[RMDB]
RNA sequence: GGGAACGACUCGAGUAGAGUCGAAAAGGAACCGGAUGUCAUCACGUUGUUGCAGUACCAGAUGGCAUCUUAAAUCCGAUCUGCAAAUAAGCAUGUAGAUAGCUGAUGUGGGCUUUAGCUGGACGGGGGAAUACAGGCAACUUCGGUUGCCUGUAAACAUCAUUAUUACCUUCGGGUAAUAAUGAUGAAAAGAAACAACAACAACAAC
Reactivity to DMS in 0.01 (KOAc 150mM, MgCl2 10mM, bicine 150mM(pH8.5), 24C), signal-to-noise 3, nucleotides 027 to 156: g000g000a060a070c070c130g000g000a000u000g020u010c000a030u000c020a230c170g020u000u000g020u000u000g000c010a090g020u000a090c070c040a150g000a030u000g010g010c010a020u000c010u000u000a060a100a140u000c020c030g000a060u000c020u000g020c030a040a090a110u000a080a140g010c090a140u000g010u000a030g010a080u000a050g000c030u010g000a070u000g000u000g000g020g000c040u010u000u000a070g030c060u020g000g010a070c050g000g000g020g030g000a110a190u010a020c000a020g000g000c000a000a010c000u000u010c270g070g010u000u000g000c000c000u000g030u000a000a040a130
Reactivity to 2A3 in 0.01 (KOAc 150mM, MgCl2 10mM, bicine 150mM(pH8.5), 24C), signal-to-noise 3, nucleotides 027 to 156: g040g000a070a040c060c050g000g000a010u010g010u010c000a010u000c020a020c150g040u050u040g050u050u040g020c090a050g060u130a080c040c050a080g000a010u000g000g000c010a000u000c000u000u020a010a030a010u040c010c010g020a040u010c030u030g010c020a050a050a100u200a200a050g060c040a020u060g010u040a020g040a130u070a030g060c080u080g020a090u070g080u110g020g020g000c020u080u090u130a030g000c050u080g030g020a030c030g000g010g000g010g040a020a010u040a020c000a000g000g000c000a000a000c000u030u030c120g110g000u000u000g000c000c010u000g000u000a000a000a000